[RMDB]
RNA sequence: GGGAACGACUCGAGUAGAGUCGAAAACUCGGAGGACUUCCGGAGACAGGUGGUGGACUCUGUCGCAUGGGAGACUGUGUGCAGACUUGGGGAGGGAAUGGUUUUCCAUGUGGUCCACUUAGUCGCGCCUGUAUGCAUUAUUCGUAAUGCAUACAGGAAAAGAAACAACAACAACAAC
Reactivity to 2A3 in 0.01 (KOAc 150mM, MgCl2 10mM, bicine 150mM(pH8.5), 24C), signal-to-noise 7, nucleotides 027 to 126: c010u000c020g050g040a060g030g060a070c040u080u010c030c010g040g010a050g020a010c030a020g110g160u090g020g030u030g090g000a010c010u060c100u270g160u230c080g000c010a010u020g010g000g010a020g020a000c010u030g010u010g040u090g080c070a040g030a200c060u130u160g060g020g010g010a090g040g020g030a050a080u070g050g000u000u030u030u000c010c000a000u020g030u060g050g010u010c000c000a010c030u040u060a030g010u030c020g000c020g010
Reactivity to DMS in 0.01 (KOAc 150mM, MgCl2 10mM, bicine 150mM(pH8.5), 24C), signal-to-noise 9, nucleotides 027 to 126: c040u000c030g020g010a040g000g010a270c210u000u000c010c020g020g010a180g010a040c040a050g020g030u000g010g020u000g000g010a030c030u000c230u010g010u010c110g010c020a040u010g010g000g000a040g000a050c010u000g020u000g010u000g000c100a100g000a090c110u010u000g010g000g000g010a130g000g000g000a160a040u000g000g000u000u000u000u000c010c010a030u000g010u000g010g010u000c010c020a030c030u000u000a060g010u000c050g010c170g000